Annotation
Structure probing data (DMS) for a 177-nucleotide construct. For DMS the reverse transcriptase was MarathonRT. Source: RMDB library TTRINS, as collected in RNAgym.

RNA sequence: GGGAACGACUCGAGUAGAGUCGAAAAGAUAUGGACUCAUACAUUCAGAGGUUCAAGACAUGACCCUGCAUUUCGGAAACGAAAUGAAGGUCAACAGCUUGACCUCUGAAUGUAUGAGUCCUAAGUCCAUGCCGACUAAGUUCGCUUAGUCGGCAUGAAAAGAAACAACAACAACAAC
Reactivity to DMS in 0.01 (KOAc 150mM, MgCl2 10mM, bicine 150mM(pH8.5), 24C), signal-to-noise 1, nucleotides 027 to 126: g010a120u010a300u000g000g000a000c000u000c000a000u000a050c000a000u000u000c000a000g010a000g080g000u030u000c000a020a010g000a050c120a300u000g000a020c090c040c040u000g000c000a010u000u000u000c010g000g010a060a080a290c000g000a000a000a000u000g000a180a080g020g020u010c000a050a110c210a190g000c000u000u000g000a000c010c000u000c000u000g020a000a000u000g010u000a000u000g000a000g000u000c000c000u000a000a110g010u010c040